[RMDB]
RNA sequence: GGGAACGACUCGAGUAGAGUCGAAAAGAUAUGGAUGGGUAUCCAUGCCUCAAUAACAGCGACGAUCUGGUGAGUCGGAAACGACUCCCAGGGAGCUGAGUUGAGGCAUGGAUACCCAUCCUAAGUCCAAAUCAGAAGAGUUCGCUCUUCUGAUUUGAAAAGAAACAACAACAACAAC
Reactivity to DMS in 0.01 (KOAc 150mM, MgCl2 10mM, bicine 150mM(pH8.5), 24C), signal-to-noise 4, nucleotides 027 to 126: g000a080u000a300u010g000g000a010u000g010g000g020u000a010u000c000c000a010u000g010c000c000u000c000a020a010u010a140a220c040a010g010c000g010a060c300g000a020u000c000u010g000g020u020g020a010g000u000c000g010g010a090a100a200c010g010a010c000u000c000c000c000a000g000g000g000a020g040c010u000g000a240g000u000u000g010a000g010g020c000a000u000g000g000a000u000a000c000c000c000a000u000c000c000u000a010a070g000u000c050
An RNA of 177 nucleotides, treated with DMS and read out base by base. DMS adducts were read by reverse transcription with MarathonRT. The RNA was probed in 150 mM KOAc, 10 mM MgCl2 and 150 mM bicine (pH 8.5) at 24 C.